[RMDB]
RNA sequence: GGGAACGACUCGAGUAGAGUCGAAAAUCAAAUACUGCCACAUCUGCUUGUGAUGGCACAUACCUGCCAAGGACACAGAAACAUUCACACACACCUUUGAAAAACAAACGCCAGCGAAUAAAUAAUAAAUACCGUAUGCAUCACAUUAAUUAGUGGGAAGAUCCGAAUGAUUCGUCAUUCGGAUCUUAAAAGAAACAACAACAACAAC
Reactivity to DMS in 0.01 (KOAc 150mM, MgCl2 10mM, bicine 150mM(pH8.5), 24C), signal-to-noise 1, nucleotides 027 to 156: u020c040a120a060a140u030a020c020u020g000c050c000a050c040a070u000c060u000g020c130u000u040g040u010g000a190u010g020g000c070a080c060a120u000a040c060c090u010g020c010c000a000a100g040g030a050c030a060c000a110g010a130a040a030c040a120u010u000c000a060c060a100c010a170c060a060c040c050u000u000u010g000a030a060a100a060a130c090a090a050a140c090g060c070c070a030g030c040g000a000a080u000a080a100a090u000a110a110u000a080a040a060u000a040c030c000g000u000a080u000g060c030a070u000c050a050c030a110u010u030a030a120u010u000a030g010u000g040g000g010
Reactivity to 2A3 in 0.01 (KOAc 150mM, MgCl2 10mM, bicine 150mM(pH8.5), 24C), signal-to-noise 2, nucleotides 027 to 156: u100c040a020a040a040u090a070c110u120g060c010c000a050c000a010u060c040u140g030c030u110u060g010u060g040a070u020g020g020c030a020c000a020u080a040c010c000u030g000c000c020a020a060g000g000a010c010a010c030a030g060a030a150a010c020a070u070u030c030a040c000a000c000a000c020a020c120c050u100u030u080g070a120a060a010a050a010c030a000a270a010c040g020c060c010a020g030c040g040a080a030u050a160a070a020u080a000a140u040a070a030a020u080a140c020c030g040u030a020u080g000c000a050u050c020a000c000a030u060u080a200a060u070u010a070g050u080g000g020g000
This 207-nucleotide RNA was probed chemically with DMS and 2A3. DMS adducts were read by reverse transcription with MarathonRT. 2A3 adducts were read by reverse transcription with SuperScript II with manganese. Values cover nucleotides 27 to 156.